[RMDB]
Structure probing data (2A3 and DMS) for a 177-nucleotide construct. The DMS profile rests on 10,793 reads. Conditions: 150 mM KOAc, 10 mM MgCl2 and 150 mM bicine (pH 8.5), 24 C. For DMS the reverse transcriptase was MarathonRT.
RNA sequence: GGGAACGACUCGAGUAGAGUCGAAAAUGCUGAUACACUUCUCGGCGGGCUGCCGACAGAAUUGAUUUCGUCGGCUGGAGGUCAACUGUUCUACUCCCGCCCGGUUGUCUCAGCCAAUGGCGAGCCGGUUCUACUGUAGGUUCGCCUACAGUAGAACAAAAGAAACAACAACAACAAC
Reactivity to 2A3 in 0.01 (KOAc 150mM, MgCl2 10mM, bicine 150mM(pH8.5), 24C), signal-to-noise 5, nucleotides 027 to 126: u100g000c000u010g010a000u020a040c030a010c050u090u060c050u030c020g010g000c020g020g000g000c040u060g010c000c020g020a010c030a130g050a020a060u220u180g120a080u090u170u020c030g020u000c010g020g010c030u030g030g040a040g010g060u100c050a100a100c150u120g090u130u040c020u070a130c050u030c000c000c000g000c010c000c000g020g000u040u040g010u010c010u000c020a010g000c010c010a090a110u120g070g010c050g060a020g050c030c000g040
Reactivity to DMS in 0.01 (KOAc 150mM, MgCl2 10mM, bicine 150mM(pH8.5), 24C), signal-to-noise 8, nucleotides 027 to 126: u010g010c010u000g010a040u000a100c290a080c160u000u000c040u000c300g000g000c020g010g000g010c190u000g000c040c070g010a010c020a050g010a040a030u010u010g010a160u000u000u000c010g010u000c010g010g010c020u000g000g000a050g010g000u010c090a080a120c150u000g000u000u000c050u000a110c150u000c000c010c040g000c010c010c050g000g010u000u000g010u000c070u000c010a020g010c020c170a080a070u000g000g010c060g000a080g010c030c030g010